[RMDB]
RNA sequence: GGGAACGACUCGAGUAGAGUCGAAAAAAUGUAACCUUCAACAGUUGUGGUAAAAGCUGCACCAGCGAACUUUUCCUUUUCGGUCUUCUUACCCUUUACCACUGGAACAGCCAAUAGUUCGUUAUAAAUACCGGCGUAGAAAUCCAAAACUUGCAACACAAUCUAAUCAGUUCGCUGAUUAGAUUGUAAAAGAAACAACAACAACAAC
Reactivity to 2A3 in 0.01 (KOAc 150mM, MgCl2 10mM, bicine 150mM(pH8.5), 24C), signal-to-noise 2, nucleotides 027 to 156: a000a000u260g030u090a070a040c020c010u120u080c020a060a060c030a110g030u050u030g020u130g060g000u040a040a060a000a140g000c050u020g010c030a000c030c020a000g030c020g020a030a030c000u150u080u070u160c020c000u130u080u090u150c110g030g010u010c020u080u000c010u100u070a110c000c000c000u020u040u110a020c020c020a030c040u070g040g010a010a040c060a050g100c000c010a030a020u040a030g040u040u070c010g000u050u070a080u010a160a190a000u080a070c060c020g010g000c020g040u030a020g090a060a070a020u050c020c000a060a090a040a090c090u070u130g040c030a050a020c010